Conditions: 150 mM KOAc, 10 mM MgCl2 and 150 mM bicine (pH 8.5), 24 C. An RNA of 207 nucleotides, treated with DMS and 2A3 and read out base by base. For DMS, 11,946 sequencing reads were counted. DMS adducts were read by reverse transcription with MarathonRT.
RNA sequence: GGGAACGACUCGAGUAGAGUCGAAAAGUACAUCACCCCCUUCCUCUUUCUACUUGUAGAUUAAGUCAUGGUACUAAUGAUGAUGGCAGUGCUGAUGGUAAUGAUAGUGACGGUGAUCAUGUUCAUGGUGAGUGACGGCAGGUGAUGGUGAUGAUGAUAGUGCAUUUAUGUUCGCAUAAAUGCACUAAAAAGAAACAACAACAACAAC
Reactivity to DMS in 0.01 (KOAc 150mM, MgCl2 10mM, bicine 150mM(pH8.5), 24C), signal-to-noise 4, nucleotides 027 to 156: g040u010a080c060a060u020c050a120c020c000c020c040c030u000u000c030c010u000c070u000u000u000c020u020a050c050u000u010g020u000a060g010a110u000u000a060a140g010u000c030a110u000g020g010u000a110c060u000a060a070u010g010a070u000g010a090u000g010g000c030a100g020u000g010c020u000g030a080u010g010g040u000a070a090u010g010a100u010a100g030u000g010a090c020g040g030u000g010a080u000c030a020u000g020u000u000c060a070u000g000g030u000g000a120g010u000g010a060c080g020g000c100a080g010g020u000g010a080u000g020g020u000g000a070u000g010a070u010g020a170
Reactivity to 2A3 in 0.01 (KOAc 150mM, MgCl2 10mM, bicine 150mM(pH8.5), 24C), signal-to-noise 3, nucleotides 027 to 156: g040u040a020c020a120u060c070a120c010c020c020c000c040u010u050c030c010u040c000u020u070u060c030u030a050c010u040u040g050u100a040g040a100u080u090a090a020g020u030c020a040u050g020g020u030a030c030u080a040a100u080g030a030u010g010a040u000g040g000c040a020g060u010g030c030u040g000a100u040g060g010u070a110a080u140g040a030u050a040g020u020g020a010c020g000g020u020g020a030u030c030a040u050g030u060u040c070a050u030g000g020u010g020a050g000u060g010a000c010g010g010c010a020g010g020u040g030a050u040g010g000u000g010a010u010g000a010u010g020a000